[RMDB]
RNA sequence: GGGAACGACUCGAGUAGAGUCGAAAAGCGUCUAAUGUUGACCACCGUCCUGGCGGCGGGCUUUGCCAUGCAUUUUAUCAAAGGUACCCCGCCUCCUUUGAUGCCGCCUCUUUUGUGAUGCGCGACGCACGUAAGGCGAAUUCGUUCGCCUUACGUGAAAAGAAACAACAACAACAAC
Reactivity to 2A3 in 0.01 (KOAc 150mM, MgCl2 10mM, bicine 150mM(pH8.5), 24C), signal-to-noise 2, nucleotides 027 to 126: g050c060g030u010c040u100a160a150u300g100u240u130g150a060c000c010a040c030c040g100u030c000c020u050g020g040c010g000g000c000g000g000g020c000u110u160u180g000c000c040a070u100g040c050a120u070u110u240u290a080u130c040a080a000a040g000g020u030a060c020c030c000c000g000c010c000u000c010c000u020u020u090g030a030u060g030c050c020g000c040c010u040c000u060u130u100u120g160u120g050a030u020g010c030g000c020g060a030c020g010
Reactivity to DMS in 0.01 (KOAc 150mM, MgCl2 10mM, bicine 150mM(pH8.5), 24C), signal-to-noise 4, nucleotides 027 to 126: g020c090g010u000c030u000a070a110u010g000u010u010g020a100c060c050a130c120c060g010u000c040c060u000g020g010c090g020g010c030g020g000g000c130u000u010u010g010c040c060a100u000g010c190a060u000u000u000u000a050u010c040a020a050a040g010g010u010a210c300c020c010c030g000c070c080u000c010c000u000u030u020g010a040u000g020c070c030g000c010c010u000c040u000u000u020u000g020u010g000a030u010g000c080g010c070g010a030c060g010
Description:
An RNA of 177 nucleotides, treated with 2A3 and DMS and read out base by base. For DMS, 3,886 sequencing reads were counted. The 2A3 profile rests on 2,497 reads. Source: RMDB library OK2TRN, as collected in RNAgym. The RNA was probed in 150 mM KOAc, 10 mM MgCl2 and 150 mM bicine (pH 8.5) at 24 C.